[RMDB]
RNA sequence: GGGAACGACUCGAGUAGAGUCGAAAAGAGCGAGUUAAUAUUAGAUCGUCGCGAUCUAAAAAGUCCGACACGCUGUCGCGGGGCAGCACCUCCCGGGAAAGGGCCCUUGGUCCGGAUUCGAAAGAAACCGUAGUAUUAGCUUCGGCUAAUACUACGGAAAAGAAACAACAACAACAAC
Reactivity to DMS in 0.01 (KOAc 150mM, MgCl2 10mM, bicine 150mM(pH8.5), 24C), signal-to-noise 1, nucleotides 027 to 126: g010a060g040c000g020a070g010u010u010a080a070u000a210u000u010a020g010a040u000c000g010u020c300g010c110g000a020u000c010u000a000a020a180a200a140g020u000c130c010g000a060c040a070c170g010c010u010g000u000c020g050c180g040g000g010g010c070a010g010c060a290c150c040u000c020c010c060g000g030g010a040a090a070g020g010g000c010c020c170u040u010g040g020u000c010c050g000g000a210u010u000c030g020a100a090a060g010a080a080a150
An RNA of 177 nucleotides, treated with DMS and read out base by base. DMS adducts were read by reverse transcription with MarathonRT. The reactions ran in a buffer of 150 mM KOAc, 10 mM MgCl2 and 150 mM bicine (pH 8.5), at 24 C. The data come from the RNA Mapping Database (RMDB), library OK2TRN.